About this RNA
Chemical mapping of a 177-nucleotide RNA with DMS and 2A3. The reactions ran in a buffer of 150 mM KOAc, 10 mM MgCl2 and 150 mM bicine (pH 8.5), at 24 C. Source: RMDB library TTRDEL, as collected in RNAgym.
RNA sequence: GGGAACGACUCGAGUAGAGUCGAAAAGAUAUGGAGUCCAGCAUCGAUCUAUAAGGGUCGGAAACGACCCAUAGGGAGCUGAGCUCCUAAGUCAAAAGAGUACAUCUCGUUCGCGAGAUGUACUCAAGGUUAGAAAGAUCUUCGGAUCUUUCUAACCAAAAGAAACAACAACAACAAC
Reactivity to DMS in 0.01 (KOAc 150mM, MgCl2 10mM, bicine 150mM(pH8.5), 24C), signal-to-noise 2, nucleotides 027 to 126: g010a030u000a300u020g000g030a010g020u000c010c000a030g020c010a300u000c110g000a050u000c000u010a020u000a100a120g020g000g010u000c000g030g000a040a120a190c020g000a020c000c000c000a020u000a010g000g000g000a050g000c010u000g010a050g010c010u000c000c000u000a000a070g000u000c050a080a070a090a150g000a020g010u000a010c000a010u000c000u000c000g020u000u030c220g020c010g000a010g000a010u000g000u000a000c010u000c010a010a010
Reactivity to 2A3 in 0.01 (KOAc 150mM, MgCl2 10mM, bicine 150mM(pH8.5), 24C), signal-to-noise 2, nucleotides 027 to 126: g020a020u040a010u140g000g010a010g010u050c030c010a000g000c020a240u300c080g070a060u040c020u030a020u040a300a300g000g000g000u020c020g020g000a040a050a020c010g000a000c090c000c020a000u000a020g010g020g030a010g000c020u010g020a010g030c010u010c000c000u020a130a010g040u030c010a000a000a000a250g010a000g000u000a000c000a000u000c000u010c010g020u030u100c300g000c000g100a000g000a010u000g000u000a000c000u000c000a000a000
2A3 adducts were read by reverse transcription with SuperScript II with manganese. The DMS profile rests on 2,236 reads.